Conditions: 150 mM KOAc, 10 mM MgCl2 and 150 mM bicine (pH 8.5), 24 C. Chemical mapping of a 177-nucleotide RNA with 2A3 and DMS. Reactivities are rounded to 0.1 and cut off at 0 and 3. Values cover nucleotides 27 to 126. It was measured as part of the RMDB library M2PK90. For 2A3, 2,859 sequencing reads were counted. 2A3 adducts were read by reverse transcription with SuperScript II with manganese.
RNA sequence: GGGAACGACUCGAGUAGAGUCGAAAAGCAUUGGGAAAGUUAAUGAAAAGUGCAUCAAAACUUUCCCUAAACGAAAUCAAAAUCGUUAUGAUGCACUUUUGACAUCGAUUAAGAUGAAUAGACACAAUAAUCAUGAGCAAUUCGUUGCUCAUGAUUAAAAAGAAACAACAACAACAAC
Reactivity to 2A3 in 0.01 (KOAc 150mM, MgCl2 10mM, bicine 150mM(pH8.5), 24C), signal-to-noise 3, nucleotides 027 to 126: g030c050a120u120u170g000g000g050a020a020a040g040u090u120a150a060u140g100a010a060a020a000g000u000g010c000a010u000c030a130a150a000a100c000u000u010u000c020c020c000u010a010a000a000c010g020a010a000a040u220c080a010a100a010a150u010c020g010u030u030a040u140g000a000u020g010c010a000c000u000u000u000u030g010a010c000a010u030c040g110a140u150u200a120a090g020a000u050g000a040a040u110a080g070a000c030a010c020a130a110
Reactivity to DMS in 0.01 (KOAc 150mM, MgCl2 10mM, bicine 150mM(pH8.5), 24C), signal-to-noise 4, nucleotides 027 to 126: g020c130a110u010u010g010g000g000a040a030a030g000u000u010a110a100u000g000a050a030a020a050g030u000g000c010a020u000c010a020a100a060a060c030u000u010u000c010c000c000u000a020a030a010c020g000a020a050a070u000c300a090a090a140a080u000c010g000u000u010a260u010g000a010u000g010c000a020c010u000u000u000u000g010a180c010a010u000c010g000a170u020u010a100a110g010a060u000g000a020a090u010a130g000a120c160a030c140a080a100